[RMDB]
RNA sequence: GGGAACGACUCGAGUAGAGUCGAAAAGCGAUCCUCGACCUCUCCGUCCUCGAGGACGACGGCGUCGACGUGGGUGCUGCCGGUGUCGAGACCGAGGACGCGCAUGUUCGGUCCCCCGGUGACGUCGCGAAACCGAGUAUUUCGAUACUCGGUUUCGAAAAGAAACAACAACAACAAC
Reactivity to DMS in 0.01 (KOAc 150mM, MgCl2 10mM, bicine 150mM(pH8.5), 24C), signal-to-noise 2, nucleotides 027 to 126: g020c050g000a160u010c010c010u000c010g000a080c050c020u000c010u000c060c030g030u000c020c040u010c120g000a110g030g010a080c040g000a130c070g010g000c050g010u000c010g020a070c040g020u000g010g010g010u010g010c080u000g010c040c000g000g010u010g010u010c070g000a180g000a060c060c030g020a070g010g000a030c000g000c040g020c140a040u000g010u000u010c030g000g010u010c030c010c010c020c040g000g010u000g010a080c050g010u010c060g000
Reactivity to 2A3 in 0.01 (KOAc 150mM, MgCl2 10mM, bicine 150mM(pH8.5), 24C), signal-to-noise 2, nucleotides 027 to 126: g000c020g070a160u050c010c010u020c010g030a050c020c000u030c030u080c040c010g010u030c000c020u140c070g050a130g040g030a020c010g050a040c020g010g020c010g020u070c020g040a060c040g040u130g050g130g050u160g090c030u040g020c010c000g070g030u080g060u090c060g050a060g070a130c030c010g000a020g030g040a020c020g010c000g000c090a100u190g070u160u110c030g000g000u020c000c010c000c000c000g020g010u050g030a020c010g020u020c020g000
Chemical mapping of a 177-nucleotide RNA with DMS and 2A3. The data come from the RNA Mapping Database (RMDB), library OK2TRN. DMS (dimethyl sulfate) methylates the pairing face of unpaired adenines and cytosines. Conditions: 150 mM KOAc, 10 mM MgCl2 and 150 mM bicine (pH 8.5), 24 C. 2A3 adducts were read by reverse transcription with SuperScript II with manganese.